[RMDB]
RNA sequence: GGGAACGACUCGAGUAGAGUCGAAAAGAUAUGGAAUAUUUACAGGGAGUCUCCACUCGGAAACGAGUGUGAGACUUUGAUCUGUACGGAUAUUCCUAAGUCAAAGACAAUUCUUCGGAAUUGUCAAUCGUCUAGGUAACUUCGGUUACCUAGACGAAAAAGAAACAACAACAACAAC
Reactivity to DMS in 0.01 (KOAc 150mM, MgCl2 10mM, bicine 150mM(pH8.5), 24C), signal-to-noise 1, nucleotides 027 to 126: g000a010u010a210u000g000g000a040a010u000a050u000u000u000a000c000a000g000g000g000a000g030u000c000u010c000c000a030c000u000c000g010g000a120a070a130c000g000a010g000u000g010u030g020a000g000a020c000u000u010u020g000a030u000c000u000g000u020a020c300g000g000a030u060a030u010u000c000c000u010a040a170g000u010c040a060a090a100g000a010c010a000a020u000u000c000u000u000c300g040g010a020a000u010u000g010u000c000a090a070